[RMDB]
RNA sequence: GGGAACGACUCGAGUAGAGUCGAAAAUGCUGGUAUGUAUAAUGCCAGUACUGGUGUAAUUGAAAUUUCGCCAGGUUCGUAAAGUGGUUAGGCAAGUGUUGUGUGCCCUGUGUUUAAGUACUGGUGGGAUAUCUGUAUCCUUCGGGAUACAGAUAUCAAAAGAAACAACAACAACAAC
Reactivity to DMS in 0.01 (KOAc 150mM, MgCl2 10mM, bicine 150mM(pH8.5), 24C), signal-to-noise 3, nucleotides 027 to 126: u000g030c000u000g010g010u000a010u010g000u010a120u010a150a030u000g000c000c000a010g000u000a040c030u000g000g000u010g010u010a040a050u010u010g020a070a140a170u000u010u000c020g000c010c010a010g000g010u010u010c050g000u010a050a070a080g030u000g000g010u010u000a060g000g000c030a040a090g010u000g020u000u000g020u000g000u010g010c020c020c060u000g010u000g000u000u000u000a050a070g010u000a060c030u010g010g010u000g000g010
Reactivity to 2A3 in 0.01 (KOAc 150mM, MgCl2 10mM, bicine 150mM(pH8.5), 24C), signal-to-noise 1, nucleotides 027 to 126: u090g000c000u000g010g000u010a020u030g040u030a060u080a300a020u020g000c020c000a010g000u000a050c000u000g000g000u010g010u040a040a080u080u050g230a190a060a150u050u050u020c000g000c010c000a020g030g060u040u030c070g080u120a060a050a100g030u040g000g040u080u080a030g020g000c040a090a060g050u000g050u070u050g030u040g040u090g060c000c000c000u080g000u000g010u070u160u050a080a010g000u050a030c010u050g000g060u070g020g120